[RMDB]
RNA sequence: GGGAACGACUCGAGUAGAGUCGAAAAAUACACUUUCGAGUGUAUAAGCGUGCGUACUACUCGUGGGAGUACGCAGAUACGAACCGAUCCCAAAUAGGAUCGUCCCGAGUAGUACGUUGAUCACGAGUAUCGCCGUUCGCUCCCGUUCGCGGGAGAAGCCACGUUAUUAUUUCGAUAAUAACGUGGCAAAAGAAACAACAACAACAAC
Reactivity to DMS in 0.01 (KOAc 150mM, MgCl2 10mM, bicine 150mM(pH8.5), 24C), signal-to-noise 1, nucleotides 027 to 156: a000u000a030c010a000c000u000u010u030c240g030a090g080u000g030u000a000u000a100a070g020c060g010u010g050c000g030u000a030c060u000a000c010u000c030g010u000g010g020g010a230g040u000a070c060g040c180a040g010a150u010a070c010g000a070a090c180c000g000a040u000c000c010c020a050a150a290u000a100g000g000a020u000c010g060u000c000c000c020g010a100g000u000a040g010u000a010c030g000u000u020g000a140u000c050a200c040g000a140g040u010a070u000c030g060c020c010g030u000u000c050g000c000u000c000c010c000g020u000u010c200g060c030g000g000g000a050g020a020a150
Reactivity to 2A3 in 0.01 (KOAc 150mM, MgCl2 10mM, bicine 150mM(pH8.5), 24C), signal-to-noise 2, nucleotides 027 to 156: a000u000a020c000a020c010u080u150u180c300g070a010g020u050g040u000a040u050a070a030g040c060g090u120g020c020g000u000a050c030u020a010c020u000c050g050u250g000g080g010a160g010u010a020c120g080c080a010g020a030u070a020c050g050a080a110c110c000g010a010u040c000c070c000a120a300a090u300a000g000g010a010u020c010g010u080c000c000c000g010a020g020u010a010g010u000a000c000g020u020u060g070a090u080c020a010c070g070a050g030u060a080u190c060g040c060c030g070u130u150c070g000c080u000c000c000c000g000u060u070c300g030c000g100g000g000a000g010a050a000